[RMDB]
RNA sequence: GGGAACGACUCGAGUAGAGUCGAAAAGGAACAAAAAGCAUACGUACCAGCUAUGUUUACGGCUGCGUUAAACAUUCAGACGAGUGUAAACACUGUUGUUAGAGAUUUUGAAAAUUAUGUGAAACAGGAAUCGUCGUACAUUCGUGUACGACGAUUCAAAAGAAACAACAACAACAAC
Reactivity to DMS in 0.01 (KOAc 150mM, MgCl2 10mM, bicine 150mM(pH8.5), 24C), signal-to-noise 1, nucleotides 027 to 126: g050g000a200a090c130a030a080a060a130a040g070c030a120u000a020c060g000u010a100c110c030a020g000c050u000a140u010g020u010u000u020a010c060g030g000c020u010g000c090g010u000u010a040a050a060c140a050u010u000c100a110g020a070c060g000a100g020u000g000u000a020a020a030c000a100c100u000g060u010u000g010u000u000a060g020a200g000a120u000u000u000u020g020a080a070a060a060u000u000a090u010g000u000g000a090a020a080c110a100g010